[RMDB]
RNA sequence: GGGAACGACUCGAGUAGAGUCGAAAAUGUCUCUAGGUUUAAUCCCAGACCUCUCUGUGCUUAGGGCAAACACUCAUUUGGCCUUAAAUGGGAUCCUGUGAGAGGGGGUCCCUCCAUUGGCAGCUGGCAAAUGUGGAGGAUUCGUCCUCCACAUUUGAAAAGAAACAACAACAACAAC
Reactivity to DMS in 0.01 (KOAc 150mM, MgCl2 10mM, bicine 150mM(pH8.5), 24C), signal-to-noise 5, nucleotides 027 to 126: u020g000u000c020u010c020u010a040g000g000u010u020u020a120a150u010c020c000c020a120g010a130c040c010u010c020u010c010u000g010u010g010c030u000u010a040g010g000g000c040a090a090a110c230a120c150u030c120a080u010u010u010g010g000c060c010u000u020a030a060a060u030g000g000g010a020u000c010c020u000g030u010g010a050g010a070g000g010g000g010g000u000c000c000c010u010c080c050a070u010u010g010g010c020a110g010c150u000g000g010
Reactivity to 2A3 in 0.01 (KOAc 150mM, MgCl2 10mM, bicine 150mM(pH8.5), 24C), signal-to-noise 3, nucleotides 027 to 126: u090g050u010c020u010c020u090a030g040g030u040u100u170a060a070u060c000c010c010a030g040a090c010c010u010c000u020c030u070g080u050g080c010u020u070a010g000g010g000c010a020a090a030c110a040c060u110c060a130u080u060u180g140g010c000c000u100u150a070a120a120u120g000g000g000a010u020c000c000u090g010u060g060a070g020a050g090g020g000g000g020u010c010c010c000u010c010c000a060u010u020g020g000c020a020g020c040u060g070g010
Notes:
Structure probing data (DMS and 2A3) for a 177-nucleotide construct. As a SHAPE reagent, 2A3 marks flexible, mostly unpaired nucleotides at the ribose 2'-OH.